[RMDB]
The record gives the reactivity of an RNA of 170 nucleotides to 2A3 and DMS. For 2A3, 950 sequencing reads were counted. For DMS the reverse transcriptase was MarathonRT. Values cover nucleotides 27 to 129. Conditions: 150 mM KOAc, 10 mM MgCl2 and 150 mM bicine (pH 8.5), 24 C.
RNA sequence: GGGAACGACUCGAGUAGAGUCGAAAACCCGAUUCCGUCCAUCCCCCCCCCCAGGAGGUCCCCCCAGGAAUGGCGGGACCCCACUCUGCAGGGUCCGCGUUCCAUUCUUUCUUACCUUGUGGCCGGCUAGCCGUGGCGUUCGCGCCACGGAAAAGAAACAACAACAACAAC
Reactivity to 2A3 in 0.01 (KOAc 150mM, MgCl2 10mM, bicine 150mM(pH8.5), 24C), signal-to-noise 1, nucleotides 027 to 129: c000c000c000g040a080u190u120c060c100g110u040c040c040a090u120c070c000c000c010c000c000c000c150c010c030a020g060g030a000g000g040u000c010c000c000c000c020c000a020g000g070a070a030u050g070g040c040g000g000g000a000c000c000c040c000a000c020u220c020u000g010c150a150g000g070g110u010c010c010g120c000g080u120u000c000c000a000u030u030c000u050u070u050c030u020u020a070c010c020u170u130g100u020g040g000c010c000g000g000c010u060a050g120
Reactivity to DMS in 0.01 (KOAc 150mM, MgCl2 10mM, bicine 150mM(pH8.5), 24C), signal-to-noise 2, nucleotides 027 to 129: c000c030c030g030a180u020u040c060c030g010u170c050c040a150u020c000c000c000c000c000c000c000c000c000c000a030g000g000a050g010g000u000c050c030c040c030c040c030a050g000g070a050a030u010g030g020c120g010g050g000a000c050c020c000c010a040c100u030c110u050g020c110a260g030g000g010u020c020c040g010c010g050u090u040c020c000a040u000u000c020u000u000u000c040u000u040a160c140c060u020u000g050u150g000g010c000c000g100g000c000u010a200g030